RNA sequence: GGGAACGACUCGAGUAGAGUCGAAAAUGCUGUCGUUGACAGCGCCCAACGCUUCACAACCUGAAAGAAGCGCCUGUUAUCAGGACGGUUAAUCCAUUUACCGGUGCAGACCUCUGCAAACACCGGGUUUAACAAGCAUCUUUCGAGAUGCUUGUAACAACAAAUAAAACUUCGGUUUUAUUUGUUGAAAAGAAACAACAACAACAAC
Reactivity to DMS in 0.01 (KOAc 150mM, MgCl2 10mM, bicine 150mM(pH8.5), 24C), signal-to-noise 3, nucleotides 027 to 156: u000g000c010u010g010u000c010g040u000u020g020a040c000a040g000c020g000c030c040c010a100a080c010g020c000u010u000c010a130c130a110a160c060c030u010g000a140a190a270g010a020a030g010c020g030c000c060u000g030u000u020a120u010c060a100g010g000a080c040g000g040u000u000a140a200u010c070c050a190u000u000u000a090c010c000g020g000u010g000c010a100g000a190c120c090u010c100u010g030c040a150a140a050c010a010c010c010g000g010g000u000u000u000a060a040c000a020a000g000c000a040u000c000u000u000u010c260g010a030g020a020u000g010c000u000u000g010u000a030a180
Reactivity to 2A3 in 0.01 (KOAc 150mM, MgCl2 10mM, bicine 150mM(pH8.5), 24C), signal-to-noise 6, nucleotides 027 to 156: u150g000c000u010g020u030c090g300u080u300g010a000c000a000g000c010g030c000c000c000a030a010c030g020c000u010u000c030a080c050a180a040c000c000u010g000a010a010a010g000a010a010g010c010g050c000c000u160g040u210u140a130u300c010a000g000g000a000c010g000g030u000u020a010a060u040c030c000a040u050u080u170a090c000c010g020g010u010g010c020a020g120a300c030c110u210c050u150g050c060a080a100a010c040a010c000c000g010g000g010u020u130u050a020a000c000a000a000g000c000a000u000c000u040u080u140c190g100a010g000a010u000g000c000u000u000g000u010a000a000
Structure probing data (DMS and 2A3) for a 207-nucleotide construct.
High DMS reactivity at an A or C suggests that its Watson-Crick edge is free.
Source: RMDB library M2RFPK, as collected in RNAgym.
For DMS the reverse transcriptase was MarathonRT.
The DMS profile rests on 6,246 reads.
The 2A3 profile rests on 3,956 reads.
Conditions: 150 mM KOAc, 10 mM MgCl2 and 150 mM bicine (pH 8.5), 24 C.